[RMDB]
RNA sequence: GGGAACGACUCGAGUAGAGUCGAAAAGAUAUGGAUGUCCCUGAGCAACAGCCAUGAUAUCGGAAACGAUAUAUGGACAUGCUCUGGGACAUCCUAAGUCAAAGUUUGAUCGUUCGCGAUCAAACAACCCAUGGAAAGCGUUCGCGCUUUCCAUGGGAAAAGAAACAACAACAACAAC
Reactivity to DMS in 0.01 (KOAc 150mM, MgCl2 10mM, bicine 150mM(pH8.5), 24C), signal-to-noise 1, nucleotides 027 to 126: g010a010u010a050u030g000g010a020u000g000u000c010c000c000u000g000a030g070c000a090a080c300a140g000c010c000a000u020g040a000u010a010u010c000g000g010a070a030a050c000g020a010u010a020u000a000u010g000g000a010c070a300u020g020c010u000c030u000g000g010g010a030c010a000u000c000c000u000a000a130g010u000c010a180a080a110g000u000u010u000g010a010u020c000g050u000u010c300g010c010g000a020u000c000a000a000a000c050a130a150
Reactivity to 2A3 in 0.01 (KOAc 150mM, MgCl2 10mM, bicine 150mM(pH8.5), 24C), signal-to-noise 1, nucleotides 027 to 126: g000a030u060a060u090g000g000a010u010g000u010c000c000c000u040g020a010g020c120a070a160c070a230g060c010c000a070u220g090a000u130a000u010c010g000g070a030a000a000c000g000a000u010a000u020a000u010g000g020a020c070a150u300g000c010u030c020u000g000g000g000a010c000a000u000c000c000u010a020a000g010u000c040a010a030a160g010u000u000u000g010a010u000c010g010u130u110c300g060c010g160a000u020c000a030a000a000c000a020a040